[RMDB]
RNA sequence: GGGAACGACUCGAGUAGAGUCGAAAAGAUAUGGAUUAUCCUGGUCAACGAAGAACUCGGAAACGAGGGAGUUGUCAGGAGUAAUCCUAAGUCAAAACCCUAAGGAAUGUUCGCAUUCCUUAGGGAAUCGUUCUUUCAGGUUCGCCUGAAAGAACGAAAAAGAAACAACAACAACAAC
Reactivity to 2A3 in 0.01 (KOAc 150mM, MgCl2 10mM, bicine 150mM(pH8.5), 24C), signal-to-noise 1, nucleotides 027 to 126: g020a020u060a040u130g000g000a000u000u000a000u000c000c010u020g030g110u300c020a030a030c040g190a300a180g020a100a020c010u000c010g010g030a090a030a030c030g020a000g000g050g000a030g000u000u030g000u020c000a000g000g010a020g000u020a000a010u000c010c000u010a140a040g020u000c020a000a010a080a260c010c000c000u010a000a000g020g000a020a000u010g020u100u190c300g000c200a000u020u010c020c000u000u000a010g000g030g020a000a070
Reactivity to DMS in 0.01 (KOAc 150mM, MgCl2 10mM, bicine 150mM(pH8.5), 24C), signal-to-noise 2, nucleotides 027 to 126: g000a030u020a300u000g000g000a000u000u000a030u000c000c000u000g000g020u010c020a010a010c000g040a120a210g000a100a220c000u000c010g030g020a180a080a240c000g000a020g020g010g000a060g000u000u000g010u000c020a000g000g000a040g050u000a000a010u000c000c010u010a030a060g010u010c030a100a110a110a190c010c000c000u000a000a000g000g000a020a010u000g000u000u000c300g010c010a010u000u000c000c010u020u000a000g000g000g000a010a010
Source: RMDB library TTRDEL, as collected in RNAgym. The record gives the reactivity of an RNA of 177 nucleotides to 2A3 and DMS. The reactions ran in a buffer of 150 mM KOAc, 10 mM MgCl2 and 150 mM bicine (pH 8.5), at 24 C. The DMS profile rests on 1,551 reads.